An RNA of 177 nucleotides, treated with DMS and 2A3 and read out base by base. The 2A3 profile rests on 848 reads.
[RMDB]
RNA sequence: GGGAACGACUCGAGUAGAGUCGAAAAGAGGUCAGAAAUUGAUCCCACCCAAGGACUUUUGUUCUCUGUUUAUGAUUGCAGAGUUGAAGGAGAAAGAGCAGUUUUUGAGAUCAAGGAGAAUUGGGGAGCUUAACGCUUUGUUCGCAAAGCGUUAAGCAAAAGAAACAACAACAACAAC
Reactivity to DMS in 0.01 (KOAc 150mM, MgCl2 10mM, bicine 150mM(pH8.5), 24C), signal-to-noise 1, nucleotides 027 to 126: g060a060g000g020u000c030a060g010a040a120a120u010u010g020a040u000c010c010c020a230c040c000c010a080a050g020g000a170c060u000u000u010u000g000u000u000c010u000c000u000g000u000u000u010a070u010g000a050u000u000g000c010a030g040a110g040u000u000g030a090a110g000g010a100g010a060a140a060g000a100g000c010a050g000u010u000u000u010u000g000a030g010a030u000c030a040a050g000g000a030g020a230a100u000u000g000g000g000g000a210
Reactivity to 2A3 in 0.01 (KOAc 150mM, MgCl2 10mM, bicine 150mM(pH8.5), 24C), signal-to-noise 1, nucleotides 027 to 126: g130a030g070g000u030c020a000g150a190a300a100u090u060g000a000u010c000c020c000a040c000c010c010a020a010g060g000a010c010u000u040u120u180g050u030u010c020u000c010u000g160u130u230u060a190u210g040a060u110u020g010c020a000g060a180g300u150u210g040a130a030g150g060a090g070a020a050a010g040a030g060c010a010g010u040u040u110u150u040g010a020g000a020u000c020a000a020g020g020a060g000a020a000u010u030g020g000g020g020a030